Chemical mapping of a 177-nucleotide RNA with DMS and 2A3.

[RMDB]
RNA sequence: GGGAACGACUCGAGUAGAGUCGAAAAGCCGUGCUCGAGAGGGAGCUGAAAAUGCAGAGCUAUCCCGUCGUUUCGCUAAACAAAUGCGAAACGACAAAUUGCGUUACAUACGCAAUCCUCUAAUGAACAGCCAAUUCUCAUUCGUGAGAAUUGGCUGAAAAGAAACAACAACAACAAC
Reactivity to DMS in 0.01 (KOAc 150mM, MgCl2 10mM, bicine 150mM(pH8.5), 24C), signal-to-noise 1, nucleotides 027 to 126: g020c040c100g080u010g010c010u000c060g000a070g010a060g000g000g000a040g000c010u000g000a030a020a070a050u020g010c080a080g000a090g010c020u000a270u000c030c020c000g080u000c000g000u000u000u010c070g000c000u020a080a140a120c300a060a020a150u010g020c000g000a020a000a000c000g010a000c000a030a010a060u000u000g000c020g000u000u020a110c240a140u000a010c010g030c000a020a000u000c000c000u000c020u010a030a130u040g010a090a160
Reactivity to 2A3 in 0.01 (KOAc 150mM, MgCl2 10mM, bicine 150mM(pH8.5), 24C), signal-to-noise 1, nucleotides 027 to 126: g000c000c010g140u080g000c000u010c020g080a010g010a000g020g030g000a010g000c060u040g080a050a000a010a090u300g000c040a000g030a030g050c010u030a030u050c010c020c010g000u000c010g010u000u000u000c000g000c030u040a060a260a200c070a030a080a010u080g020c000g040a000a000a000c000g010a000c000a000a070a000u000u030g010c000g020u040u120a190c060a150u180a020c020g000c020a000a010u000c010c020u000c030u060a040a190u190g110a070a010

2A3 adducts were read by reverse transcription with SuperScript II with manganese. The reactions ran in a buffer of 150 mM KOAc, 10 mM MgCl2 and 150 mM bicine (pH 8.5), at 24 C. For DMS, 732 sequencing reads were counted. For DMS the reverse transcriptase was MarathonRT. For 2A3, 1,312 sequencing reads were counted.